This 177-nucleotide RNA was probed chemically with 2A3 and DMS.
For DMS the reverse transcriptase was MarathonRT.

[RMDB]
RNA sequence: GGGAACGACUCGAGUAGAGUCGAAAAACACUCCUCAUUACGAUGAGGAGUGACGCCAAGUCCGAGGCCCCGUGACCGUCGGGGUCUGGUGCACAAAGGGAAGACCGAUAGCUACGGCUAUCGGUCAGGCUACCAAUGUUUUCGAACAUUGGUAGCCAAAAGAAACAACAACAACAAC
Reactivity to 2A3 in 0.01 (KOAc 150mM, MgCl2 10mM, bicine 150mM(pH8.5), 24C), signal-to-noise 4, nucleotides 027 to 126: a000c000a010c010u000c000c000u000c000a000u020u100a100c300g110a030u000g010a000g000g010a010g000u000g010a000c020g030c010c010a040a020g080u010c020c020g100a040g000g020c010c000c000c000g040u060g130a250c080c070g220u100c010g010g020g040g000u010c000u000g020g020u130g000c090a050c060a140a130a040g120g010g050a060a050g010a020c000c000g000a000u000a000g000c000u000a030c190g110g000c000u000a000u000c000g000g010u000c000a000
Reactivity to DMS in 0.01 (KOAc 150mM, MgCl2 10mM, bicine 150mM(pH8.5), 24C), signal-to-noise 2, nucleotides 027 to 126: a220c010a000c000u000c000c030u000c030a000u030u000a100c240g020a050u050g010a010g000g000a020g010u000g000a020c110g020c010c030a080a220g040u000c130c000g020a120g000g000c000c000c000c030g000u000g000a100c200c220g000u040c010g000g000g040g000u000c000u000g000g000u030g060c100a120c070a040a100a060g000g020g010a150a100g000a050c010c000g020a000u000a010g000c000u000a140c190g000g000c010u000a000u000c000g000g010u000c000a010
2A3 adducts were read by reverse transcription with SuperScript II with manganese.